[RMDB]
RNA sequence: GGGAACGACUCGAGUAGAGUCGAAAAAGAAAGUCAAAGUGAUGCAUAUUGCUGAAGUGUUGAUGAGCCGCUGAGGAUAUAAAGAUGUCGAUCAAAACCAGUAAUACAGAUUUUAAGACACGCAUCCACACUUUCGUAUUUUCGAAUACGAAAGUGUAAAAGAAACAACAACAACAAC
Reactivity to 2A3 in 0.01 (KOAc 150mM, MgCl2 10mM, bicine 150mM(pH8.5), 24C), signal-to-noise 3, nucleotides 027 to 126: a000g110a030a020a020g070u050c060a060a010a050g070u120g080a010u020g000c020a020u020a020u060u080g020c020u030g040a130a030g010u040g030u080u080g000a070u020g040a000g070c050c040g030c090u050g060a070g070g050a040u090a010u030a170a100a010g050a090u080g060u110c030g030a040u000c050a000a000a000a080c040c010a010g020u020a020a010u050a060c060a040g080a070u070u120u030u160a060a020g070a010c020a000c100g000c000a010u000c030c000
Reactivity to DMS in 0.01 (KOAc 150mM, MgCl2 10mM, bicine 150mM(pH8.5), 24C), signal-to-noise 5, nucleotides 027 to 126: a060g030a100a080a060g000u010c040a060a060a070g020u010g020a050u000g020c060a300u010a070u000u000g010c010u000g010a120a120g020u000g010u010u010g010a060u000g010a120g010c060c060g000c080u000g010a120g000g000a080u010a080u000a110a050a100g000a100u010g030u000c050g010a070u000c060a020a040a070a060c040c020a040g000u000a040a030u000a080c130a090g000a090u000u000u010u010a070a130g010a090c100a040c120g000c060a030u000c020c070
Source: RMDB library OK2TST, as collected in RNAgym. An RNA of 177 nucleotides, treated with 2A3 and DMS and read out base by base. 2A3 adducts were read by reverse transcription with SuperScript II with manganese. The reactions ran in a buffer of 150 mM KOAc, 10 mM MgCl2 and 150 mM bicine (pH 8.5), at 24 C.